[RMDB]
RNA sequence: GGGAACGACUCGAGUAGAGUCGAAAAGGCUCUCCCUUAGCCAUCCGAGUGGACGUUCGUCCUCCUUCGGAUGCCCAGGUCGGACCGCGAGGAGGUGGAGAUGCCAUGCCGACCCGAAGAGGAAAGACACGCCCAAAGUUCGCUUUGGGCAAAAGAAACAACAACAACAAC
Reactivity to 2A3 in 0.01 (KOAc 150mM, MgCl2 10mM, bicine 150mM(pH8.5), 24C), signal-to-noise 9, nucleotides 027 to 129: g020g000c010u000c010u030c020c010c020u030u120a040g030c020c010a000u000c000c000g000a000g020u050g010g020a010c040g110u190u220c170g020u130c010c010u030c030c060u100u060c000g000g010a000u010g000c000c010c000a030g020g040u040c020g020g030a060c010c010g030c040g030a070g050g010a010g000g020u080g010g010a060g000a030u150g040c020c010a030u100g010c010c010g020a030c000c000c010g030a060a040g030a020g040g040a030a030a010g080a020c050a030c140
Reactivity to DMS in 0.01 (KOAc 150mM, MgCl2 10mM, bicine 150mM(pH8.5), 24C), signal-to-noise 8, nucleotides 027 to 129: g000g000c040u030c010u000c050c030c080u000u040a060g040c160c020a010u000c000c000g020a040g000u000g000g000a030c030g020u060u080c190g030u040c010c000u050c050c090u070u020c030g000g020a040u000g000c020c050c040a030g010g030u020c060g030g040a170c040c050g010c080g020a040g000g000a040g030g040u000g010g000a090g020a070u040g050c070c030a050u060g040c050c000g000a000c000c010c040g000a070a050g000a020g000g000a050a060a040g030a090c150a070c150